[RMDB]
RNA sequence: GGGAACGACUCGAGUAGAGUCGAAAACAGGAGAUCAGCAUAGCUCCAUUCUACUAUGCAUCUAGUCGUCGUUUUCGACGUCUAGUAUAGCCCCACACUGCUGGGGCGAUGAACAGCAGAUUACCACUACUCGUAGCGUGGGUUAUGGCUACGUACACCGGUCCUGAUUAUUCGUAAUCAGGACCGGAAAAGAAACAACAACAACAAC
Reactivity to 2A3 in 0.01 (KOAc 150mM, MgCl2 10mM, bicine 150mM(pH8.5), 24C), signal-to-noise 1, nucleotides 027 to 156: c020a020g070g000a020g000a030u090c090a110g130c020a010u010a000g030c010u050c000c120a020u070u030c050u020a010c000u000a010u020g000c000a020u010c000u000a000g070u010c000g000u000c000g050u100u010u220u300c040g000a000c000g000u000c000u000a000g000u010a050u090a000g000c000c000c030c000a040c000a020c100u050g160c000u000g000g000g000g000c050g030a030u120g050a030a010c060a020g030c070a050g040a180u190u190a050c030c000a000c080u120a000c000u000c070g000u030a010g000c030g000u140g020g000g000u040u080a120u120g070g010c000u000a000c020g020u050a020c000a000
Notes:
Chemical mapping of a 207-nucleotide RNA with 2A3. The reactions ran in a buffer of 150 mM KOAc, 10 mM MgCl2 and 150 mM bicine (pH 8.5), at 24 C. It was measured as part of the RMDB library OK3TST. Reactivities are given for positions 27 through 156. 2A3 adducts were read by reverse transcription with SuperScript II with manganese.